[RMDB]
RNA sequence: GGGAACGACUCGAGUAGAGUCGAAAAAGCCAGACCGCUCAGCCGGUGAAUCCGGGAGCGAACCGGCCGGCGAGCGGUCCGCCGAUCCUGGCGAGGAACGCACCGAAAGCUACCCCCUGGUGCCUCAUAUUCCUCGUAUUUUCGAAUACGAGGAAUAAAAAGAAACAACAACAACAAC
Reactivity to DMS in 0.01 (KOAc 150mM, MgCl2 10mM, bicine 150mM(pH8.5), 24C), signal-to-noise 6, nucleotides 027 to 126: a110g010c040c060a130g000a020c010c000g020c000u000c000a120g040c000c010g000g000u040g010a110a130u070c070c010g010g000g010a200g000c220g010a060a130c000c010g000g010c010c000g010g010c000g010a020g020c000g010g010u000c000c060g010c020c010g010a090u040c080c050u010g010g020c020g000a120g000g010a180a100c150g000c020a020c030c020g000a060a080a080g000c070u020a160c060c020c000c040c010u000g000g030u000g010c060c070u000c100a220
Reactivity to 2A3 in 0.01 (KOAc 150mM, MgCl2 10mM, bicine 150mM(pH8.5), 24C), signal-to-noise 2, nucleotides 027 to 126: a010g040c010c010a010g000a000c000c000g000c010u010c020a050g010c000c000g000g020u100g110a050a090u090c020c000g010g000g060a120g210c100g020a050a090c000c000g010g000c000c000g000g000c000g000a000g000c000g000g000u000c000c000g010c000c000g040a080u110c000c050u080g010g010c010g000a020g020g040a090a050c050g000c050a020c020c020g080a130a040a010g030c030u110a140c000c000c000c000c040u030g020g000u010g030c000c010u040c010a090
The record gives the reactivity of an RNA of 177 nucleotides to DMS and 2A3.
Source: RMDB library OK1LIB, as collected in RNAgym.
For 2A3 the reverse transcriptase was SuperScript II with manganese.
The RNA was probed in 150 mM KOAc, 10 mM MgCl2 and 150 mM bicine (pH 8.5) at 24 C.